[RMDB]
RNA sequence: GGGAACGACUCGAGUAGAGUCGAAAAUAUCACCUCAUCCGUUAAAUGCCGCCUAACUAAACUUCUAAGCUUCUCUUUUGCUGUAAGUCCAUGCAUUUCACCGAGCCAUUGAUUUACUGUCUCUAUUACUAAAUUUAUCAUUCGUGAUAAAUUUAGUAAAAGAAACAACAACAACAAC
Reactivity to 2A3 in 0.01 (KOAc 150mM, MgCl2 10mM, bicine 150mM(pH8.5), 24C), signal-to-noise 9, nucleotides 027 to 126: u150a020u040c030a060c030c010u020c020a050u030c020c020g050u040u100a110a140a050u130g020c010c020g020c020c010u040a050a040c030u050a070a090a090c020u080u040c030u100a060a050g020c010u080u030c030u010c000u020u080u130u120g030c020u040g030u090a050a020g030u000c000c000a030u070g020c020a040u030u050u100c060a070c030c030g020a010g030c010c010a040u040u050g040a080u070u080u140a090c050u050g020u040c000u000c000u050a070u040u000
Reactivity to DMS in 0.01 (KOAc 150mM, MgCl2 10mM, bicine 150mM(pH8.5), 24C), signal-to-noise 3, nucleotides 027 to 126: u010a060u020c090a120c030c020u010c080a090u010c030c040g010u000u020a110a110a100u040g000c060c020g000c000c020u010a050a050c070u040a070a080a100c040u000u010c020u000a120a100g000c010u000u010c040u010c020u020u000u010u020g010c010u000g000u010a040a090g010u020c010c030a050u010g000c070a080u020u020u010c070a100c060c010g010a060g000c030c020a080u020u000g000a090u010u000u010a080c100u000g000u000c030u000c010u000a040u000u000
Structure probing data (2A3 and DMS) for a 177-nucleotide construct. The DMS profile rests on 4,247 reads. It was measured as part of the RMDB library OK1LIB. Conditions: 150 mM KOAc, 10 mM MgCl2 and 150 mM bicine (pH 8.5), 24 C.